[RMDB]
RNA sequence: GGGAACGACUCGAGUAGAGUCGAAAAUAUUUUUGAGAUCAGACUCAUUAUUUUAAGGAUAUUGAAUGUUCAUGAAAGAGAAGCACAUUUAUUGAACAGUUAUUUGCCACAAAUUUUCAAAUAUGUUUUUCCAUUUACUCUUCUAUGUCUUAAUAUAGAUGGUAUACCCAUUCGUGGGUAUACCAUCAAAAGAAACAACAACAACAAC
Reactivity to 2A3 in 0.01 (KOAc 150mM, MgCl2 10mM, bicine 150mM(pH8.5), 24C), signal-to-noise 2, nucleotides 027 to 156: u070a010u030u250u030u050u030g010a010g000a010u170c050a040g100a110c010u010c050a050u020u260a060u040u130u040u060a090a030g080g000a040u070a040u040u140g040a090a070u090g010u070u000c040a030u030g020a170a110a000g060a020g010a000a000g100c030a000c030a050u090u100u200a110u030u110g050a080a000c000a000g030u020u090a040u200u070u110g110c050c040a060c120a040a140a030u040u110u070u140c000a030a010a010u050a040u040g000u000u020u000u000u000c000c010a020u010u020u080a070c030u090c040u060u050c050u070a010u130g080u050c070u170u230a200a080u300a080u220a140
This 207-nucleotide RNA was probed chemically with 2A3. The 2A3 profile rests on 691 reads. Values are in units of 0.01, from 0 to 300, in steps of 10.